[RMDB]
RNA sequence: GGGAACGACUCGAGUAGAGUCGAAAACCGGGCCCGGCAGGGUGGUUUGCGACCGAACCGGCGGCACGUCCAGAGGGGAUCUGACAUGAUCUCGUUUGUCCUCGACGUUGCUGGUAAAACCCAAUCCUUAUUACCUAUAUUUCGAUAUAGGUAAUAAAAAAGAAACAACAACAACAAC
Reactivity to DMS in 0.01 (KOAc 150mM, MgCl2 10mM, bicine 150mM(pH8.5), 24C), signal-to-noise 9, nucleotides 027 to 126: c010c010g000g000g000c010c000c000g010g040c300a090g010g000g030u000g000g000u000u000u040g000c270g000a100c010c000g000a050a030c010c010g000g010c020g000g000c020a020c010g000u000c010c110a080g010a050g010g010g000g000a000u000c010u000g020a180c240a100u030g000a020u000c010u000c050g010u010u010u010g010u020c080c040u000c140g010a030c020g000u020u020g010c000u000g010g000u030a040a060a130a140c010c010c010a090a110u050c140c080
Reactivity to 2A3 in 0.01 (KOAc 150mM, MgCl2 10mM, bicine 150mM(pH8.5), 24C), signal-to-noise 9, nucleotides 027 to 126: c010c000g000g010g010c020c000c000g120g080c130a150g050g010g010u030g010g010u020u030u080g040c030g020a010c000c010g010a030a010c000c000g010g010c000g000g010c020a000c010g000u020c030c050a030g020a030g030g010g000g010a010u000c010u070g170a100c070a170u280g010a020u010c010u020c030g080u070u130u170g120u070c010c010u010c010g000a000c010g040u070u120g000c000u010g010g040u120a040a040a020a040c010c010c000a010a070u070c020c010

Record summary:
Chemical mapping of a 177-nucleotide RNA with DMS and 2A3. The data come from the RNA Mapping Database (RMDB), libraries RFM100 and RFMREP.